An RNA of 177 nucleotides, treated with 2A3 and read out base by base.
Values cover nucleotides 27 to 126.
Conditions: 150 mM KOAc, 10 mM MgCl2 and 150 mM bicine (pH 8.5), 24 C.
[RMDB]
RNA sequence: GGGAACGACUCGAGUAGAGUCGAAAAACGCUAUACGUAGCGAGGAGAUCCCGAAAUGGCACUGCAUGAAUUCACGGUUGUUGCUCGGGCCGUGCAUCCAGUGGUUCCAUACCGGGUCGCUGCCGAAUUGAGGUAGGCACUUCGGUGCCUACCUCAAAAAAGAAACAACAACAACAAC
Reactivity to 2A3 in 0.01 (KOAc 150mM, MgCl2 10mM, bicine 150mM(pH8.5), 24C), signal-to-noise 1, nucleotides 027 to 126: a000c030g000c150u070a030u020a080c100g100u060a000g000c040g030a000g160g000a010g000a050u080c020c000c010g010a160a200a000u000g000g080c020a000c000u000g090c010a190u020g010a120a080u090u040c000a000c010g060g010u060u020g150u120u150g060c030u040c000g000g020g000c000c000g000u000g010c000a000u040c070c000a000g000u000g000g000u060u040c000c000a000u040a010c070c040g000g000g020u010c000g010c010u080g030c000c000g010a030a100